[RMDB]
RNA sequence: GGGAACGACUCGAGUAGAGUCGAAAAGAUAUGGACGAUGCCAUGAGGAUUCGCAGGAGAGGACUCUCGGAAACGAGAGUCUCCCCACCUCCUGCGAAUCUACCCACCAUGAGCAUCGUCCUAAGUCCGAUAGAUGCGUGUUCGCACGCAUCUAUCGAAAAGAAACAACAACAACAAC
Reactivity to DMS in 0.01 (KOAc 150mM, MgCl2 10mM, bicine 150mM(pH8.5), 24C), signal-to-noise 2, nucleotides 027 to 126: g010a090u000a200u000g020g000a020c000g010a080u000g020c000c010a040u000g000a130g030g010a010u000u010c000g020c000a020g020g000a020g120a170g010g000a020c000u000c000u000c010g000g030a050a050a160c010g010a000g030a010g040u010c030u000c070c010c000c030a300c140c040u000c000c000u000g000c010g000a010a000u000c000u010a010c130c140c120a300c230c000a000u000g000a070g000c000a010u000c010g000u010c000c010u000a010a110g010u000c000

An RNA of 177 nucleotides, treated with DMS and read out base by base.
For DMS the reverse transcriptase was MarathonRT.
It was measured as part of the RMDB library TTRINS.
The reactions ran in a buffer of 150 mM KOAc, 10 mM MgCl2 and 150 mM bicine (pH 8.5), at 24 C.